[RMDB]
RNA sequence: GGGAACGACUCGAGUAGAGUCGAAAAUAGAUGUCUUUGCCACUUCCACGGGAUCUCUGGGAGCUGGAAACUGAGCUUUAAGAAAUAACUAUAGUGCAAAGGGAACUAAGGGAAAAGGGUUCAGCCCAAAGCAGAAGGGACUGUGAUGAUCACAGUAGAUACCCCAUGAUUUCGAUCAUGGGGUAUCAAAAGAAACAACAACAACAAC
Reactivity to 2A3 in 0.01 (KOAc 150mM, MgCl2 10mM, bicine 150mM(pH8.5), 24C), signal-to-noise 1, nucleotides 027 to 156: u150a060g060a050u070g040u060c050u090u050u130g060c000c020a030c060u080u000c000c040a060c130g100g000g030a050u050c140u040c020u160g000g030g000a000g000c120u010g000g000a010a010a030c030u050g010a010g060c050u070u040u080a130a000g040a110a160a070u070a000a050c060u050a070u120a270g050u110g010c030a080a050a080g070g000g000a000a070c040u070a030a090g010g000g030a000a050a030a000g000g020g010u070u080c090a060g030c000c000c020a070a020a000g000c010a000g010a060a040g000g080g000a000c000u020g010u030g020a130u100g040a020u100c000a000c000a010g010u060a080
Notes:
The record gives the reactivity of an RNA of 207 nucleotides to 2A3. The reactions ran in a buffer of 150 mM KOAc, 10 mM MgCl2 and 150 mM bicine (pH 8.5), at 24 C. Values cover nucleotides 27 to 156.